[RMDB]
The data come from the RNA Mapping Database (RMDB), library OK2TRN. An RNA of 177 nucleotides, treated with DMS and read out base by base. Reactivities are given for positions 27 through 126.
RNA sequence: GGGAACGACUCGAGUAGAGUCGAAAAUGGAACUACCCUGGUGUCUGUUGUUAAACUGUAGAGAGACAGAUUCCACUAUGGAAAGUUUAAUACGGUAAUCAGUUUUAAAGGGCGCUCAAUUUGAUUACCUACGAACGGAGUUCGCUCCGUUCGUAGGAAAAGAAACAACAACAACAAC
Reactivity to DMS in 0.01 (KOAc 150mM, MgCl2 10mM, bicine 150mM(pH8.5), 24C), signal-to-noise 2, nucleotides 027 to 126: u000g000g020a100a050c080u010a150c060c000c030u000g010g000u010g010u000c040u000g000u000u000g000u020u010a040a090a090c040u000g000u010a090g010a190g000a220g010a070c040a090g010a110u000u000c010c000a130c190u030a080u010g000g000a060a070a110g010u000u000u000a060a120u000a080c120g020g000u010a110a030u000c040a040g000u000u040u000u030a030a030a090g000g000g020c210g010c010u010c130a020a120u000u010u000g000a040u000u010a050
For DMS, 1,120 sequencing reads were counted. The RNA was probed in 150 mM KOAc, 10 mM MgCl2 and 150 mM bicine (pH 8.5) at 24 C.